[RMDB]
RNA sequence: GGGAACGACUCGAGUAGAGUCGAAAAAUGGUAGUUAGUCUACUCGCUAUCCUAGUUACUUUGGAGUAAUCUAAAGUGUGUGUAAACGGGCGAAAGUCUGUAAAAUACUCGGGACAUAGGGUCAACAAGAACUAGUAGACCUUCGGGUCUACUAGAACUUACAAACUUCGUUCGCGAAGUUUGUAAGAAAAGAAACAACAACAACAAC
Reactivity to DMS in 0.01 (KOAc 150mM, MgCl2 10mM, bicine 150mM(pH8.5), 24C), signal-to-noise 2, nucleotides 027 to 156: a150u000g030g020u000a050g070u000u000a060g000u010c010u000a030c000u000c080g010c110u010a070u020c040c010u000a120g020u010u000a030c050u000u010u000g020g000a080g020u000a180a260u000c010u000a020a000a030g030u000g010u020g030u020g030u010a060a220a070c000g010g020g000c000g030a120a100a240g020u010c000u000g010u010a030a050a050a110u000a020c050u000c060g000g010g030a070c060a110u000a090g030g050g000u010c040a100a100c070a070a080g000a100a150c000u010a000g010u000a020g010a020c000c000u010u000c300g090g020g020u000c000u000a010c000u010a010g000a030a130
Reactivity to 2A3 in 0.01 (KOAc 150mM, MgCl2 10mM, bicine 150mM(pH8.5), 24C), signal-to-noise 3, nucleotides 027 to 156: a000u060g050g020u010a030g020u190u030a040g070u070c020u020a040c020u050c030g070c020u050a050u090c020c010u040a070g030u090u110a030c010u000u020u020g020g020a020g010u100a090a110u010c010u040a020a000a000g020u020g010u010g010u000g000u060a130a120a000c030g010g010g010c030g030a050a020a010g020u000c000u020g070u080a030a050a050a000u060a030c020u030c040g040g000g040a010c030a070u100a040g100g010g000u060c030a030a030c000a090a120g080a070a040c010u000a000g000u000a000g000a000c000c000u010u020c110g070g000g000u000c000u010a000c000u000a000g000a000a000

Annotation: An RNA of 207 nucleotides, treated with DMS and 2A3 and read out base by base. Reactivities are given for positions 27 through 156. The RNA was probed in 150 mM KOAc, 10 mM MgCl2 and 150 mM bicine (pH 8.5) at 24 C. 2A3 adducts were read by reverse transcription with SuperScript II with manganese. For 2A3, 1,714 sequencing reads were counted.